[RMDB]
RNA sequence: GGGAACGACUCGAGUAGAGUCGAAAACGCUUUGAACAUCCGGCGAUGCUCUCCGCUGACCGGGCCUUUGCGGCGGUACCGGCGGCGCUGCUGCGUUGGGGCGUAUCGCAGUUCGACGCUGAGGUGCCAGUAGACUUAACUUCGGUUAAGUCUACUGAAAAGAAACAACAACAACAAC
Reactivity to DMS in 0.01 (KOAc 150mM, MgCl2 10mM, bicine 150mM(pH8.5), 24C), signal-to-noise 6, nucleotides 027 to 126: c090g010c040u000u000u000g010a070a070c070a100u010c080c070g010g010c040g000a050u000g000c030u000c050u000c100c030g000c050u000g000a080c020c020g000g000g000c020c020u000u000u010g010c110g030g010c230g010g010u000a040c010c010g000g010c030g010g000c010g010c070u000g000c080u000g010c030g010u000u000g020g010g000g000c050g010u010a040u000c030g010c010a060g000u000u000c030g010a070c050g000c020u000g000a110g010g010u000g000c100
Reactivity to 2A3 in 0.01 (KOAc 150mM, MgCl2 10mM, bicine 150mM(pH8.5), 24C), signal-to-noise 6, nucleotides 027 to 126: c020g000c020u120u050u130g050a050a020c020a080u080c050c060g050g000c030g030a040u060g000c010u010c000u010c030c030g000c050u060g050a200c010c000g020g010g020c010c010u150u140u210g090c110g070g000c030g010g020u070a240c010c000g010g020c010g010g000c010g020c020u080g010c030u050g010c010g100u080u170g030g020g020g000c020g000u020a030u070c010g000c010a010g010u040u060c030g020a030c010g010c040u040g050a050g040g070u060g070c030

Structure probing data (DMS and 2A3) for a 177-nucleotide construct.
The reactions ran in a buffer of 150 mM KOAc, 10 mM MgCl2 and 150 mM bicine (pH 8.5), at 24 C.
Values cover nucleotides 27 to 126.
For DMS, 18,194 sequencing reads were counted.
DMS adducts were read by reverse transcription with MarathonRT.